Structure probing data (DMS and 2A3) for a 177-nucleotide construct.
In probing experiments dimethyl sulfate is read out at A N1 and C N3, which are open when not base-paired.

[RMDB]
RNA sequence: GGGAACGACUCGAGUAGAGUCGAAAAGAUAUGGAGUUGAACUACUAGUGAAGAGGCGUUGAAAUCGGAAACGAUGGAGCCUUGGAGGCUAGCAACUCCUAAGUCAAAAGGUGAGUUCGCUCACCAACUCAUUCUGUACGUUCGCGUACAGAAUGAGAAAAGAAACAACAACAACAAC
Reactivity to DMS in 0.01 (KOAc 150mM, MgCl2 10mM, bicine 150mM(pH8.5), 24C), signal-to-noise 2, nucleotides 027 to 126: g010a020u000a300u010g040g000a010g010u000u000g020a040a000c090u010a300c010u010a040g020u000g000a300a300g010a010g000g020c010g000u000u000g010a120a130a000u000c000g000g010a140a070a090c000g010a050u000g000g010a090g000c000c000u000u020g020g000a210g010g000c010u000a000g000c010a000a040c000u000c000c000u000a010a100g000u000c050a100a090a130a090g000g000u010g000a000g020u000u000c270g020c000u000c000a000c000c010a040a050
Reactivity to 2A3 in 0.01 (KOAc 150mM, MgCl2 10mM, bicine 150mM(pH8.5), 24C), signal-to-noise 2, nucleotides 027 to 126: g040a020u080a050u110g000g000a000g030u000u010g080a040a030c020u170a010c010u020a300g030u040g140a070a080g000a020g060g000c050g180u300u050g030a110a100a010u000c020g000g040a050a000a040c020g010a020u000g000g070a020g020c010c020u010u010g030g000a040g220g290c000u020a000g010c030a000a010c000u000c000c020u000a080a000g020u030c040a000a000a000a250g020g030u060g030a010g020u070u230c290g010c070u000c000a040c010c000a030a100